[RMDB]
RNA sequence: GGGAACGACUCGAGUAGAGUCGAAAAGGGAAUGGUGGUUUACCCCGUUAUCAAAUGAUUACCGACCAAUAAUUGGCGAAACUCGUUUCGCGUUGGCUGCCUAAUUCAAGGUAUUAGCGUGCCUUCAAAGACAUCAAGAAGUUCGCUUCUUGAUGAACUUCGCCUUAAUGUUCGCAUUAAGGCGAAGAAAAGAAACAACAACAACAAC
Reactivity to 2A3 in 0.01 (KOAc 150mM, MgCl2 10mM, bicine 150mM(pH8.5), 24C), signal-to-noise 2, nucleotides 027 to 156: g060g000g000a150a140u140g000g000u040g000g050u060u050u160a060c010c000c010c010g070u130u090a080u090c060a020a070a150u130g060a070u060u050a050c000c030g040a070c010c020a070a020u230a090a090u110u090g030g000c000g000a040a040a010c100u080c050g070u010u000u020c040g000c020g030u020u050g020g040c060u050g000c030c000u080a080a090u120u110c070a090a050g070g000u070a060u010u060a010g020c030g010u020g000c000c000u010u040c010a030a030a030g090a060c010a010u000c000a000a000g000a000a000g020u050u130c150g050c130u030u000c000u000u000g000a000u000g000a010a000
Reactivity to DMS in 0.01 (KOAc 150mM, MgCl2 10mM, bicine 150mM(pH8.5), 24C), signal-to-noise 1, nucleotides 027 to 156: g030g000g000a090a030u000g000g030u000g000g020u000u000u010a240c020c000c050c040g010u000u000a060u020c110a040a100a090u000g040a130u000u010a040c030c000g000a090c060c020a080a160u000a070a170u000u020g040g000c040g000a070a040a030c050u000c080g010u000u000u000c060g040c050g010u000u020g010g020c070u010g000c050c090u000a050a090u000u000c050a030a060g010g020u000a070u010u000a130g030c120g000u010g010c060c000u000u000c050a040a070a150g030a210c020a070u000c000a010a020g000a010a020g040u000u000c300g040c040u000u000c020u010u000g010a010u000g000a010a040
An RNA of 207 nucleotides, treated with 2A3 and DMS and read out base by base.
Values cover nucleotides 27 to 156.
For 2A3, 1,214 sequencing reads were counted.